[RMDB]
RNA sequence: GGGAACGACUCGAGUAGAGUCGAAAAAGCGGAGGGCGAUUCAGCCGGUCGUGUUGACAGCCCUACACGUUUGUGUAGAGUGCCCUACAUGACCGACACGCAUAUGACUCAAGCCGAGGCCCGCCGUAUCGCUACCGAGCUGAUCCGCAAGCACGGUACAUAUCUCCCGAUUCGUCGGGAGAUAUGUAAAAGAAACAACAACAACAAC
Reactivity to 2A3 in 0.01 (KOAc 150mM, MgCl2 10mM, bicine 150mM(pH8.5), 24C), signal-to-noise 5, nucleotides 027 to 156: a000g020c020g020g010a040g010g050g020c040g080a110u110u140c060a020g030c010c010g010g000u010c010g000u000g050u020u030g050a080c070a020g000c000c000c000u000a000c010a000c020g200u220u300u300g000u000g000u000a030g050a050g090u220g050c060c030c000u010a000c000a000u020g000a000c000c010g010a000c040a030c060g040c030a050u090a080u300g050a060c010u020c120a120a070g040c060c060g040a050g010g080c000c000c000g020c010c000g060u080a060u120c040g000c070u040a020c000c000g010a010g010c000u020g030a120u050c010c010g050c120a020a010g040c020a030c060g010g010u000
Reactivity to DMS in 0.01 (KOAc 150mM, MgCl2 10mM, bicine 150mM(pH8.5), 24C), signal-to-noise 1, nucleotides 027 to 156: a080g010c020g000g000a070g030g030g030c010g030a160u000u000c080a170g000c000c010g030g070u000c000g000u000g000u030u000g000a070c020a230g020c010c020c000u010a020c000a020c000g050u000u010u010g030u010g000u000a000g010a010g020u030g010c040c020c050u010a030c010a030u000g010a030c010c010g000a010c040a110c060g040c100a200u010a100u000g020a080c020u000c080a050a150g020c030c030g020a170g000g000c010c000c010g020c030c030g030u000a040u000c040g050c020u010a070c000c000g010a100g010c010u020g000a100u000c030c030g000c020a300a070g010c020a130c030g000g000u000